[RMDB]
RNA sequence: GGGAACGACUCGAGUAGAGUCGAAAACGCUGAGGGUUGAUAUUCUCCUCGCUCAAGCUGAGAUUUACACCGUUGCCAGCCGCCUUGUUGCAUCCAGCGCGGGAAGGCUUCGAUGGUCAUGCCAUCGUCAAUGACUACGGUUCGCCGUAGUCAUUGAAAAAGAAACAACAACAACAAC
Reactivity to DMS in 0.01 (KOAc 150mM, MgCl2 10mM, bicine 150mM(pH8.5), 24C), signal-to-noise 6, nucleotides 027 to 126: c140g010c040u010g000a040g000g020g010u010u010g000a090u010a140u010u010c080u000c010c030u000c040g000c020u000c070a050a090g010c030u010g000a130g010a090u010u000u000a100c120a150c060c020g000u010u000g010c050c010a130g000c050c040g000c080c020u010u010g030u000u010g040c070a100u000c130c100a110g010c080g010c030g000g010g010a060a090g010g000c030u000u010c010g010a010u000g000g020u000c160a130u010g010c010c010a030u000c030g000
Reactivity to 2A3 in 0.01 (KOAc 150mM, MgCl2 10mM, bicine 150mM(pH8.5), 24C), signal-to-noise 4, nucleotides 027 to 126: c050g000c060u050g030a030g030g120g000u070u060g090a080u060a170u300u080c090u040c020c020u000c020g050c010u030c030a070a070g000c010u080g030a030g000a200u070u040u160a090c100a020c000c050g030u060u140g070c020c030a040g040c000c010g000c000c000u120u180g120u110u210g070c030a060u070c080c030a040g000c040g000c000g030g010g020a110a040g020g000c000u060u090c010g000a010u010g000g020u060c030a080u230g040c010c000a020u030c000g040